[RMDB]
RNA sequence: GGGAACGACUCGAGUAGAGUCGAAAACAUUGUUCUGAUCAUCUGAAGAUCAGCUAGUAGAAGAGAAAGAUCAGUUAAGUCCUUUGGACCUGAUCAGCUUGAUACAAGAACUACUGAUUUCAACUUCAAAACGGGUGCUACUUCGGUAGCACCCGAAGAAAGUAUUUGACUUCGGUCAAAUACUUUCAAAAGAAACAACAACAACAAC
Reactivity to 2A3 in 0.01 (KOAc 150mM, MgCl2 10mM, bicine 150mM(pH8.5), 24C), signal-to-noise 3, nucleotides 027 to 156: c030a050u170u180g050u130u120c010u030g030a040u020c030a030u000c130u200g080a120a040g010a080u010c000a010g010c010u030a020g000u010a020g040a200a020g020a030g040a100a220a030g010a030u000c010a010g010u100u180a170a000g000u050c020c000u120u220u300g010g000a000c000c000u000g000a010u010c040a010g010c010u050u070g020a020u070a170c060a110a040g030a160a030c000u050a010c000u040g020a110u020u140u160c060a080a040c030u100u060c060a030a050a080a100c030g000g000g000u010g010c010u000a000c000u020u050c180g050g000u000a000g000c000a010c000c010c000g000a000a000
Reactivity to DMS in 0.01 (KOAc 150mM, MgCl2 10mM, bicine 150mM(pH8.5), 24C), signal-to-noise 2, nucleotides 027 to 156: c060a190u000u020g000u000u000c000u000g010a020u020c040a160u010c100u000g000a180a170g000a010u000c020a060g020c120u000a100g020u000a070g010a110a140g000a050g020a150a180a130g000a000u000c010a090g000u000u000a080a100g020u000c000c010u000u000u000g050g000a050c000c000u010g010a090u000c130a070g020c050u000u000g000a200u000a060c020a070a070g000a060a110c030u000a090c010u010g020a020u040u010u010c020a070a290c030u030u010c040a050a030a060a180c020g040g000g030u000g000c000u000a020c000u000u000c240g030g000u000a000g010c000a000c000c000c000g000a000a020
This 207-nucleotide RNA was probed chemically with 2A3 and DMS. Reactivities are rounded to 0.1 and cut off at 0 and 3. The 2A3 profile rests on 1,128 reads. The reactions ran in a buffer of 150 mM KOAc, 10 mM MgCl2 and 150 mM bicine (pH 8.5), at 24 C. The data come from the RNA Mapping Database (RMDB), library M2RFPK.